[RMDB]
RNA sequence: GGGAACGACUCGAGUAGAGUCGAAAAGAUAUGGAGCGAACGUGAGCGAGGAUCUACUGAUCGGAAACGAUCACAUGUAGGGAGCUCUCGCUCCUAAGUCAAAGAACCAGGCUUCGGCCUGGUUCAAGAAAGUUAAGUUCUUCGGAACUUAACUUUCAAAAGAAACAACAACAACAAC
Reactivity to 2A3 in 0.01 (KOAc 150mM, MgCl2 10mM, bicine 150mM(pH8.5), 24C), signal-to-noise 2, nucleotides 027 to 126: g000a010u030a010u080g000g010a000g010c030g010a060a140c300g270u290g120a020g000c020g080a300g050g040a020u000c010u000a000c000u020g000a000u010c000g030g010a020a000a010c000g000a010u010c020a020c050a090u130g000u010a000g010g000g030a000g010c010u010c010u000c030g000c010u020c000c000u000a020a010g010u010c030a030a040a290g000a000a020c000c010a000g020g030c000u070u260c300g080g000c010c020u000g000g000u000u000c000a000a010
Reactivity to DMS in 0.01 (KOAc 150mM, MgCl2 10mM, bicine 150mM(pH8.5), 24C), signal-to-noise 4, nucleotides 027 to 126: g000a020u000a090u010g000g000a010g000c000g000a070a070c190g040u020g010a030g040c000g030a060g020g020a020u000c000u000a010c010u000g000a010u000c000g010g000a020a020a070c000g010a010u000c000a020c300a080u010g000u000a010g000g000g000a050g010c000u000c010u000c010g000c000u000c000c000u000a000a060g000u000c020a100a130a160g000a010a010c000c000a000g010g010c000u000u010c260g030g000c000c000u000g000g000u000u000c010a020a110

Annotation: The record gives the reactivity of an RNA of 177 nucleotides to 2A3 and DMS. For 2A3, 5,980 sequencing reads were counted. Conditions: 150 mM KOAc, 10 mM MgCl2 and 150 mM bicine (pH 8.5), 24 C.